[RMDB]
RNA sequence: GGGAACGACUCGAGUAGAGUCGAAAAUAUUGCUUUCCAAGAGCACCUUCUCCACUUAGAAUCUUCUCAAAUGAUGCGCGAUGAAUCUGGCCGUGAAGACGACAAGCUGGGUAUGUUAAUCAAUACCUCAGAGAUCAUGAUUCGUCAUGAUCUCUGAAAAAGAAACAACAACAACAAC
Reactivity to DMS in 0.01 (KOAc 150mM, MgCl2 10mM, bicine 150mM(pH8.5), 24C), signal-to-noise 5, nucleotides 027 to 126: u010a110u010u000g010c050u010u000u000c070c090a140a170g000a050g020c030a070c210c050u000u000c020u000c010c050a090c040u000u010a070g000a110a060u000c030u000u000c030u000c030a090a070a080u000g000a030u000g000c070g010c080g000a070u010g010a060a070u000c020u000g010g000c080c050g010u000g000a070a040g010a030c040g000a170c110a050a060g010c120u010g030g020g010u000a020u000g000u010u000a080a110u010c130a080a050u010a070c060c040
Reactivity to 2A3 in 0.01 (KOAc 150mM, MgCl2 10mM, bicine 150mM(pH8.5), 24C), signal-to-noise 3, nucleotides 027 to 126: u110a040u050u090g000c030u070u030u070c070c030a050a030g040a010g060c010a040c010c020u030u010c030u010c000c020a060c030u030u070a070g020a130a050u000c020u060u010c030u030c030a100a100a120u150g030a070u090g040c100g030c030g110a090u100g050a030a090u030c040u050g030g000c000c000g000u020g040a030a010g030a010c020g010a030c010a050a010g010c040u050g000g000g010u010a030u060g100u040u090a130a060u140c050a030a040u030a070c000c010